Source: RMDB library TTRDES, as collected in RNAgym.
Structure probing data (2A3 and DMS) for a 177-nucleotide construct.
Values cover nucleotides 27 to 126.
The RNA was probed in 150 mM KOAc, 10 mM MgCl2 and 150 mM bicine (pH 8.5) at 24 C.
For 2A3 the reverse transcriptase was SuperScript II with manganese.
[RMDB]
RNA sequence: GGGAACGACUCGAGUAGAGUCGAAAAGAUAUGGAGCCACUGGGAGGACAUGGAACCAUUUCGGAAACGAAAUGGUUUCCAACAGCCUCGUGGCUCCUAAGUCAAACAUGCGCCUUCGGGCGCAUGAGUUCAGAAAAGACUUCGGUCUUUUCUGAACAAAAGAAACAACAACAACAAC
Reactivity to 2A3 in 0.01 (KOAc 150mM, MgCl2 10mM, bicine 150mM(pH8.5), 24C), signal-to-noise 2, nucleotides 027 to 126: g000a020u020a020u030g020g030a010g020c030c050a030c180u220g300g300g000a020g010g030a050c170a300u300g030g000a020a020c010c010a000u000u000u010c000g000g000a010a010a010c030g000a000a000a010u010g040g000u020u050u020c000c000a010a010c030a020g000c010c020u020c020g000u000g000g000c000u000c000c000u010a000a000g000u020c000a000a070a020c000a000u010g020c010g040c040c000u150u120c300g170g000g000c020g000c020a000u000g000a020
Reactivity to DMS in 0.01 (KOAc 150mM, MgCl2 10mM, bicine 150mM(pH8.5), 24C), signal-to-noise 1, nucleotides 027 to 126: g000a000u000a020u020g010g000a000g010c000c010a000c020u000g060g030g020a010g000g010a030c110a300u010g010g020a020a010c000c000a010u000u000u000c000g010g000a010a000a050c000g030a010a000a000u000g000g010u000u010u010c000c050a090a060c150a180g010c000c000u000c060g020u000g000g020c000u000c010c000u010a000a070g000u010c010a160a160a300c020a000u000g020c000g020c000c000u000u030c250g010g010g000c020g060c010a010u000g000a120